[RMDB]
Structure probing data (DMS and 2A3) for a 177-nucleotide construct. In probing experiments dimethyl sulfate is read out at A N1 and C N3, which are open when not base-paired. The RNA was probed in 150 mM KOAc, 10 mM MgCl2 and 150 mM bicine (pH 8.5) at 24 C. The 2A3 profile rests on 870 reads.

RNA sequence: GGGAACGACUCGAGUAGAGUCGAAAAAUAAAUGAGACCUAUUAUACCGGCUGAAACGGCAGUCCUCCCAGGAGCAAGUAAGGAGGGGAUGAGUUGAGGUUCAACCCUCCUAAGGACGCUUAGUAGAAAUCGCAAUCCUUUUCGAAGGAUUGCGAUUAAAAGAAACAACAACAACAAC
Reactivity to DMS in 0.01 (KOAc 150mM, MgCl2 10mM, bicine 150mM(pH8.5), 24C), signal-to-noise 2, nucleotides 027 to 126: a100u040a100a050a080u040g000a230g000a100c050c030u000a060u000u010a110u010a110c010c030g000g000c080u030g000a040a080a050c060g020g000c040a000g000u000c010c070u040c010c050c050a080g040g030a020g020c000a100a140g000u010a180a010g010g000a010g000g000g000g060a150u010g000a060g020u030u000g000a300g000g000u020u010c000a070a150c000c030c000u020c000c010u000a010a060g000g000a090c100g020c060u000u000a110g050u030a140g020a050
Reactivity to 2A3 in 0.01 (KOAc 150mM, MgCl2 10mM, bicine 150mM(pH8.5), 24C), signal-to-noise 1, nucleotides 027 to 126: a000u130a010a000a050u060g010a010g040a030c000c020u030a090u300u070a120u090a020c040c080g020g000c000u030g040a080a190a050c000g040g000c010a020g020u020c000c000u000c000c000c050a040g020g020a000g000c050a100a000g060u210a090a000g000g000a000g020g050g020g040a060u070g020a040g000u080u210g080a110g050g060u000u050c000a000a010c010c000c000u000c000c000u000a000a000g000g000a000c000g020c000u030u030a020g000u020a050g180a010